[RMDB]
RNA sequence: GGGAACGACUCGAGUAGAGUCGAAAAUAAAUGGUCGAUAACACGCCCAGGUGUUCCGACUACGAUUUGUGGGCCUUUUUUCAAGGCUUUAAUUUGGCGUUCGAUAGGCAUACCACCGAAUACAGUAGAUAGAUAGUUGGUUCGCCAACUAUCUAUCAAAAGAAACAACAACAACAAC
Reactivity to DMS in 0.01 (KOAc 150mM, MgCl2 10mM, bicine 150mM(pH8.5), 24C), signal-to-noise 6, nucleotides 027 to 126: u020a090a110a120u000g000g010u000c000g010a070u010a020a010c010a020c020g020c010c010c020a160g000g020u000g010u000u000c300c000g000a030c010u000a080c180g000a130u000u010u000g040u000g010g010g010c010c000u000u000u010u010u010u000c150a030a030g010g010c010u000u010u000a040a090u000u000u000g010g020c050g020u000u000c090g020a070u000a040g010g000c060a060u000a260c040c020a050c020c040g010a080a050u000a050c150a080g000u010a110
Reactivity to 2A3 in 0.01 (KOAc 150mM, MgCl2 10mM, bicine 150mM(pH8.5), 24C), signal-to-noise 2, nucleotides 027 to 126: u180a020a080a090u110g030g000u030c010g010a060u020a110a020c010a010c020g040c000c020c010a040g080g060u030g010u010u020c030c000g000a020c000u050a070c050g110a110u040u050u150g100u070g010g010g000c000c020u060u050u040u040u080u150c100a050a030g040g000c000u030u060u050a040a040u070u060u150g020g030c090g050u040u020c010g100a040u070a120g000g020c030a010u080a140c000c010a020c030c070g020a040a010u140a060c040a050g130u170a050

An RNA of 177 nucleotides, treated with DMS and 2A3 and read out base by base. The DMS profile rests on 7,701 reads. 2A3 adducts were read by reverse transcription with SuperScript II with manganese. The data come from the RNA Mapping Database (RMDB), library OK2TST. For DMS the reverse transcriptase was MarathonRT.